[RMDB]
The record gives the reactivity of an RNA of 207 nucleotides to 2A3 and DMS. The 2A3 profile rests on 5,425 reads. The RNA was probed in 150 mM KOAc, 10 mM MgCl2 and 150 mM bicine (pH 8.5) at 24 C. For 2A3 the reverse transcriptase was SuperScript II with manganese. Values cover nucleotides 27 to 156. The data come from the RNA Mapping Database (RMDB), library M2RFPK.

RNA sequence: GGGAACGACUCGAGUAGAGUCGAAAAGAAACAGGAUCGACAAGGGUGUAAAGAUCGCUCUUUUACUCGGCAUGAUACCACCGUUAUCGGGUCAACAGAGUAGUUGCAAAUGACAACGAUGCUCAGGAAGGGGUAGCACCGUUCGCGGUGCUACCAAGCAGUAAAAUGACUUCGGUCAUUUUACUGCAAAAGAAACAACAACAACAAC
Reactivity to 2A3 in 0.01 (KOAc 150mM, MgCl2 10mM, bicine 150mM(pH8.5), 24C), signal-to-noise 6, nucleotides 027 to 156: g030a000a120a000c060a070g100g040a050u050c050g050a040c090a080a100g090g060g040u090g040u130a130a110a020g040a030u070c010g020c040u020c010u020u060u020u060a070c050u030c020g000g000c020a010u100g000a010u030a030c000c010a010c000c020g060u070u040a020u060c050g000g000g040u010c010a000a030c060a040g020a000g020u070a000g010u010u010g010c030a040a170a300u220g070a130c000a030a000c010g030a080u170g010c000u010c010a020g110g070a100a070g050g090g000g000u000a000g010c000a000c010c000g030u040u040c170g010c010g070g000u000g000c010u010a000c000c000a000a000
Reactivity to DMS in 0.01 (KOAc 150mM, MgCl2 10mM, bicine 150mM(pH8.5), 24C), signal-to-noise 2, nucleotides 027 to 156: g030a200a120a090c080a170g030g000a060u010c020g010a120c090a020a120g000g020g020u010g000u020a110a080a090g010a090u000c010g050c020u000c000u010u000u010u030a040c070u000c040g010g030c010a120u010g000a110u000a090c000c020a150c040c050g010u000u000a040u000c100g010g000g030u000c030a050a090c110a120g000a040g010u000a120g020u000u020g030c000a030a080a120u020g000a090c000a020a030c020g000a150u000g040c040u010c050a050g030g010a070a120g010g040g000g010u000a030g010c000a010c000c000g010u000u000c250g020c040g090g000u010g000c000u000a000c000c000a020a140